[RMDB]
RNA sequence: GGGAACGACUCGAGUAGAGUCGAAAAUCCUAAGUCACUCACUUGGUGCGAGGAUCGUAAGACAGUAGGCUCGGAAACGAGCCUACAAUGACGCGAUCUACCCACCGCACCUUGGGAGUGAUAUGGAAAAAGACUUUUCGCUUCGGCGAAAAGUCAACGGUUAACAUAAGUUCGCUUAUGUUAACCGAAAAGAAACAACAACAACAAC
Reactivity to 2A3 in 0.01 (KOAc 150mM, MgCl2 10mM, bicine 150mM(pH8.5), 24C), signal-to-noise 4, nucleotides 027 to 156: u010c000c000u010a090a020g020u000c000a000c000u000c000a020c010u000u010g000g000u010g000c010g000a020g020g000a000u000c000g020u030a100a070g090a130c050a040g010u000a000g010g000c000u000c000g030g030a040a080a040c010g000a000g000c010c000u000a000c010a000a020u060g010a010c050g000c000g010a000u000c000u030a090c060c070c050a080c010c000g000c000a020c020c000u000u000g000g010g000a000g000u000g000a000u000a020u020g020g030a050a080a000a000a060g000a000c000u000u010u000u000c000g010c020u040u080c250g140g000c000g000a010a000a000a000g000u000c000a000a000
Reactivity to DMS in 0.01 (KOAc 150mM, MgCl2 10mM, bicine 150mM(pH8.5), 24C), signal-to-noise 2, nucleotides 027 to 156: u000c020c010u010a070a300g000u010c010a050c000u000c000a040c010u000u000g000g030u000g000c010g020a130g080g010a020u000c010g010u000a080a130g020a290c010a110g000u000a010g030g020c000u000c000g030g010a170a190a220c010g000a040g020c000c000u010a010c010a010a030u030g020a110c270g020c010g000a020u000c000u000a050c020c030c020a300c120c030g000c020a010c000c000u000u030g000g000g040a020g040u000g020a040u000a050u010g000g000a090a070a080a100a180g000a040c000u000u000u000u010c000g010c000u000u000c240g040g000c010g020a000a000a000a010g020u000c000a000a100
Structure probing data (2A3 and DMS) for a 207-nucleotide construct. Source: RMDB library RNAMAK, as collected in RNAgym. For DMS, 3,121 sequencing reads were counted.